[RMDB]
Background
Source: RMDB library OK1LIB, as collected in RNAgym. Chemical mapping of a 177-nucleotide RNA with 2A3. 2A3 adducts were read by reverse transcription with SuperScript II with manganese. For 2A3, 790 sequencing reads were counted. Conditions: 150 mM KOAc, 10 mM MgCl2 and 150 mM bicine (pH 8.5), 24 C.
RNA sequence: GGGAACGACUCGAGUAGAGUCGAAAACAAAAACAAGAAACUCGUGGUCCAACAACGCGACUAGAAAAGGACCACGAGAAGGUCACGAAAAAGAAACGUGACCCAAAUCUAGUCGCGUUGAACAAAAGCGACUACUUCUGUUCGCAGAAGUAGUCGCAAAAGAAACAACAACAACAAC
Reactivity to 2A3 in 0.01 (KOAc 150mM, MgCl2 10mM, bicine 150mM(pH8.5), 24C), signal-to-noise 1, nucleotides 027 to 126: c030a010a200a040a010a020c070a020a100g160a060a170a070c000u020c000g000u000g000g020u000c030c040a120a110c010a010a000c110g020c000g000a000c020u020a020g130a060a130a080a050g000g010a010c000c000a000c000g000a000g000a000a000g000g000u000c000a010c000g120a000a080a130a130a000g230a050a080a020c010g000u000g000a000c000c020c000a110a140a100u060c000u000a000g000u000c020g000c000g000u030u000g000a010a000c100a000a050a000a010